[RMDB]
RNA sequence: GGGAACGACUCGAGUAGAGUCGAAAAGCGCCACCGCGUGGCUAGCACGGGAGCGUCGGCGGGCCCGAGGAGCGCCGCCAGCACCGUCAGUUCGUGGCGCACCGGCUGUUCGGGUUCAGGCAGUUGCGGUGACAUACCUAUUCGUAGGUAUGUCACCAAAAGAAACAACAACAACAAC
Reactivity to 2A3 in 0.01 (KOAc 150mM, MgCl2 10mM, bicine 150mM(pH8.5), 24C), signal-to-noise 3, nucleotides 027 to 126: g020c020g000c010c010a040c030c030g100c070g090u160g040g020c060u060a090g000c100a000c010g020g040g000a300g020c040g110u230c110g030g000c000g010g040g000c070c060c050g110a210g070g090a120g010c190g070c050c000g000c000c000a000g000c000a020c000c010g010u000c000a020g000u100u120c020g020u050g010g000c010g020c010a000c010c000g000g020c010u030g020u090u100c030g000g000g060u050u120c050a050g080g000c030a050g010u040u070g050c030
Reactivity to DMS in 0.01 (KOAc 150mM, MgCl2 10mM, bicine 150mM(pH8.5), 24C), signal-to-noise 2, nucleotides 027 to 126: g000c010g020c000c050a030c020c300g020c250g010u000g000g000c060u010a090g060c120a030c030g000g020g000a180g010c030g010u010c210g020g020c000g020g010g030c020c030c100g000a130g020g000a150g000c020g000c000c000g030c030c010a110g010c030a120c040c020g030u000c020a040g000u010u010c110g010u000g020g010c010g030c040a050c080c000g000g000c010u000g000u020u000c040g010g000g000u030u000c080a100g000g010c050a070g000u010u000g000c210

This 177-nucleotide RNA was probed chemically with 2A3 and DMS. It was measured as part of the RMDB library OK2TST. For DMS, 2,210 sequencing reads were counted. For 2A3 the reverse transcriptase was SuperScript II with manganese. DMS adducts were read by reverse transcription with MarathonRT. Values cover nucleotides 27 to 126.